[RMDB]
RNA sequence: GGGAACGACUCGAGUAGAGUCGAAAAUCACAUAGUGCCUCGCAGGCCAUGGAAAGGGGUGGGGAUUUUAUUCCAAGCCUAGUGGGAAGCCAUUGGAAGAGGUCAGCAGAAGGGUGACAGGAUCCGGUGUGUGUGUUUAACAGAUCCCUCUGGCUGCCAAUGUUCACCUCUUCGGAGGUGAACAUUGAAAAGAAACAACAACAACAAC
Reactivity to 2A3 in 0.01 (KOAc 150mM, MgCl2 10mM, bicine 150mM(pH8.5), 24C), signal-to-noise 1, nucleotides 027 to 156: u040c010a000c020a080u140a060g110u120g220c000c000u040c060g100c120a020g000g050c020c020a060u030g000g030a050a040a080g020g060g000g060u240g030g000g010g000a020u000u020u070u150a200u170u130c080c010a010a010g030c000c000u060a020g010u020g030g010g020a030a020g000c010c000a110u060u090g060g000a010a000g020a020g050g030u040c050a020g000c000a000g060a190a060g030g000g000u050g010a000c020a030g090g000a070u010c050c080g060g000u020g000u030g000u000g000u000g050u020u160u120a130a030c060a060g020a090u040c000c030c000u060c000u030g060g010c050u010g010c110